[RMDB]
RNA sequence: GGGAACGACUCGAGUAGAGUCGAAAAGCCCAGACACCUGCGGGUGGCUGCAGUCGAGAAUCUUCCGCAAUGGGCGAAAGCCUGACGGAGCGACGCCGCGUGCGGGAUGAAGGCCUUCGGGUUGUAAUUUAAAUCUCUCCUUCGGGAGAGAUUUAAAAAAAGAAACAACAACAACAAC
Reactivity to DMS in 0.01 (KOAc 150mM, MgCl2 10mM, bicine 150mM(pH8.5), 24C), signal-to-noise 3, nucleotides 027 to 126: g000c020c010c010a140g010a140c130a070c010c010u010g020c070g000g000g070u010g010g010c030u000g000c150a110g010u010c010g000a140g020a110a090u020c040u020u010c000c010g000c060a070a130u020g000g010g000c020g000a110a100a130g000c010c020u010g010a050c080g010g000a080g000c020g000a130c040g000c000c020g010c010g030u000g020c010g000g000g020a070u020g010a160a080g020g000c020c010u010u020c040g000g000g000u000u000g010u020a060a120
Reactivity to 2A3 in 0.01 (KOAc 150mM, MgCl2 10mM, bicine 150mM(pH8.5), 24C), signal-to-noise 2, nucleotides 027 to 126: g010c010c000c000a030g020a000c060a080c040c030u050g030c070g010g030g000u020g010g100c000u170g090c020a110g010u160c030g030a000g060a250a100u070c010u090u000c010c000g020c100a010a070u090g000g020g020c000g040a110a000a000g000c000c000u000g070a110c000g050g030a070g000c010g000a030c010g030c040c020g000c060g160u070g000c030g000g010g010a020u050g030a060a080g010g000c000c000u090u070c100g030g000g000u010u010g050u090a000a170